[RMDB]
RNA sequence: GGGAACGACUCGAGUAGAGUCGAAAACAUAUACAUUACAUUAAACAUUUAUCAUUUCUGGUGACAGCAUUCAAAAUUUUCUUUUCUAGCUAUCUUGAACUAUACACUUCAUUGUUAUUUGCUAUAAUCACCCUACAGUGUAAUAGAAUACCACAACAGAUAUUGAAGAGUUCGCUCUUCAAUAUCUAAAAGAAACAACAACAACAAC
Reactivity to DMS in 0.01 (KOAc 150mM, MgCl2 10mM, bicine 150mM(pH8.5), 24C), signal-to-noise 1, nucleotides 027 to 156: c050a080u000a160u010a100c060a090u000u000a070c050a090u010u000a170a040a090c040a060u010u010u010a100u000c000a090u000u000u000c050u000g000g060u000g000a100c050a040g000c020a050u000u020c010a060a030a090a130u000u000u000u000c040u000u000u000u040c080u000a060g070c050u000a080u000c030u010u000g000a030a080c040u000a090u000a130c060a050c000u010u000c060a110u010u020g020u010u010a080u010u000u010g000c050u010a080u010a040a170u010c040a070c050c050c020u010a040c070a050g000u010g000u010a070a050u010a060g010a140a170u000a080c070c010a090c060a050a170c110
Reactivity to 2A3 in 0.01 (KOAc 150mM, MgCl2 10mM, bicine 150mM(pH8.5), 24C), signal-to-noise 5, nucleotides 027 to 156: c010a020u220a050u130a170c030a030u120u120a030c030a020u120u180a100a180a050c060a090u150u200u180a150u160c050a070u040u130u050c070u070g020g000u020g020a010c020a020g010c020a030u020u100c080a100a080a120a140u080u110u080u060c050u050u140u060u000c060u080a050g010c030u030a050u100c040u040u050g010a030a020c010u020a040u050a150c040a020c050u070u100c100a100u050u060g060u070u080a100u080u080u080g020c010u040a030u040a180a030u040c020a040c000c000c020u070a070c060a030g050u050g010u050a010a020u050a030g060a030a040u110a110c020c150a030c030a140a040c020
The record gives the reactivity of an RNA of 207 nucleotides to DMS and 2A3. For DMS the reverse transcriptase was MarathonRT. Conditions: 150 mM KOAc, 10 mM MgCl2 and 150 mM bicine (pH 8.5), 24 C. The data come from the RNA Mapping Database (RMDB), library OK3TST.